[RMDB]
RNA sequence: GGGAACGACUCGAGUAGAGUCGAAAAUACUCAUGGGAAGUCGGCGUGACUCCCGACUAACGUGGAUGUCCGCUUUCUGGCUCCAGGCAAAGAGUGUUGGUGCGGAUGUUGAUUAGUUGCGCGCCAACAUAGUCGGGUAAUUCGUUACCCGACUAUGAAAAGAAACAACAACAACAAC
Reactivity to DMS in 0.01 (KOAc 150mM, MgCl2 10mM, bicine 150mM(pH8.5), 24C), signal-to-noise 9, nucleotides 027 to 126: u020a060c020u000c010a110u020g000g010g010a150a040g000u000c020g000g000c060g010u050g000a040c030u010c020c000c000g010a150c210u030a110a120c090g010u030g000g000a030u020g000u010c000c020g010c060u000u020u010c090u020g010g010c030u010c010c020a050g010g010c170a080a110a100g000a050g010u000g010u000u000g000g010u000g000c010g010g010a070u020g000u010u010g000a130u010u020a120g000u000u000g010c020g010c000g000c000c000a010a050
Reactivity to 2A3 in 0.01 (KOAc 150mM, MgCl2 10mM, bicine 150mM(pH8.5), 24C), signal-to-noise 4, nucleotides 027 to 126: u160a030c020u030c040a110u110g000g000g070a160a000g060u020c030g040g030c090g070u240g030a020c000u000c030c010c000g020a010c020u090a140a030c040g100u200g000g040a040u140g010u010c000c010g040c020u020u060u040c030u030g030g000c000u010c000c020a020g070g000c050a020a040a110g020a030g000u060g000u010u010g000g000u010g000c000g010g020a050u060g040u090u020g080a190u090u110a090g050u020u040g040c010g000c000g000c010c000a000a000

Source information
The data come from the RNA Mapping Database (RMDB), library OK1LIB. This 177-nucleotide RNA was probed chemically with DMS and 2A3. The reactions ran in a buffer of 150 mM KOAc, 10 mM MgCl2 and 150 mM bicine (pH 8.5), at 24 C. DMS adducts were read by reverse transcription with MarathonRT.